[RMDB]
RNA sequence: GGGAACGACUCGAGUAGAGUCGAAAAGGGAGCAUUUAGGGAUUGGAUGACUUUGGCCGUGGACUCGGGGUUGGGACAGUGAGGCUGCCACUGAAUGGCUGUCACUCAGAAAUGUAGUUAAAAUAAAGAGCAUACAUUGGUUCGCCGAUGUGUGCUCAAAAGAAACAACAACAACAAC
Reactivity to DMS in 0.01 (KOAc 150mM, MgCl2 10mM, bicine 150mM(pH8.5), 24C), signal-to-noise 9, nucleotides 027 to 126: g000g000g000a090g010c080a080u010u010u010a090g010g000g010a110u010u030g000g000a070u010g000a060c080u010u010u030g010g010c040c040g020u030g000g010a080c100u010c080g000g000g010g010u030u020g000g000g010a100c120a050g010u020g010a050g000g010c040u000g000c020c020a040c140u030g000a110a200u020g000g010c010u010g000u010c040a090c040u000c040a060g010a050a060a070u010g000u000a040g010u000u010a040a050a090a060u020a060a120a120
Reactivity to 2A3 in 0.01 (KOAc 150mM, MgCl2 10mM, bicine 150mM(pH8.5), 24C), signal-to-noise 9, nucleotides 027 to 126: g030g020g010a060g030c090a100u090u120u210a080g030g010g050a070u050u080g070g030a050u070g050a080c050u110u100u100g060g000c030c030g030u050g040g020a050c020u020c060g010g000g020g010u060u080g030g010g020a020c020a030g030u020g050a030g030g020c020u030g010c000c000a040c050u120g110a140a110u100g030g000c010u020g040u070c010a050c060u030c010a020g100a080a110a050u130g030u090a080g050u090u170a080a100a030a020u210a040a120a040
An RNA of 177 nucleotides, treated with DMS and 2A3 and read out base by base. For 2A3, 38,292 sequencing reads were counted. Source: RMDB library OK1LIB, as collected in RNAgym. Conditions: 150 mM KOAc, 10 mM MgCl2 and 150 mM bicine (pH 8.5), 24 C. 2A3 adducts were read by reverse transcription with SuperScript II with manganese. Values cover nucleotides 27 to 126.